Source information: This 177-nucleotide RNA was probed chemically with 2A3 and DMS. Values cover nucleotides 27 to 126. Conditions: 150 mM KOAc, 10 mM MgCl2 and 150 mM bicine (pH 8.5), 24 C. For DMS, 1,899 sequencing reads were counted. It was measured as part of the RMDB library M2PK90. DMS adducts were read by reverse transcription with MarathonRT.
[RMDB]
RNA sequence: GGGAACGACUCGAGUAGAGUCGAAAAUUAAAUGGUAGCAACGGUUCCAAAGGAGCCGAAGUUCAAAGCUAAAGCAUCGAUCUAAAAAGCUACCAAAAAGGUAACGAGCUUGGCAAUGAACAAAAAAACAUACCAAUACGUUCGCGUAUUGGUAUGUAAAAGAAACAACAACAACAAC
Reactivity to 2A3 in 0.01 (KOAc 150mM, MgCl2 10mM, bicine 150mM(pH8.5), 24C), signal-to-noise 2, nucleotides 027 to 126: u040u020a040a040a060u070g000g000u040a020g000c010a030a050c010g000g020u010u000c000c020a300a230a220g010g000a010g000c010c000g030a070a010g000u000u030c010a010a010a030g000c010u140a230a020a000g000c030a120u030c020g050a040u090c050u270a010a050a100a010a090g020c000u000a010c000c000a000a040a040a010a060g070g010u020a050a010c010g000a010g000c000u020u030g000g020c030a000a040u020g000a000a000c000a080a060a000a020a000a010
Reactivity to DMS in 0.01 (KOAc 150mM, MgCl2 10mM, bicine 150mM(pH8.5), 24C), signal-to-noise 3, nucleotides 027 to 126: u020u010a070a080a120u000g020g010u010a000g040c000a290a290c040g010g000u000u010c010c010a050a180a270g010g040a030g000c000c000g010a030a030g000u000u000c010a020a000a300g000c000u000a040a030a010g000c000a060u000c030g000a040u000c090u020a050a080a100a080a050g000c000u000a000c000c000a010a040a090a090a080g000g020u000a030a060c010g050a060g010c020u000u000g010g010c000a000a300u000g000a000a010c020a010a000a050a110a050a060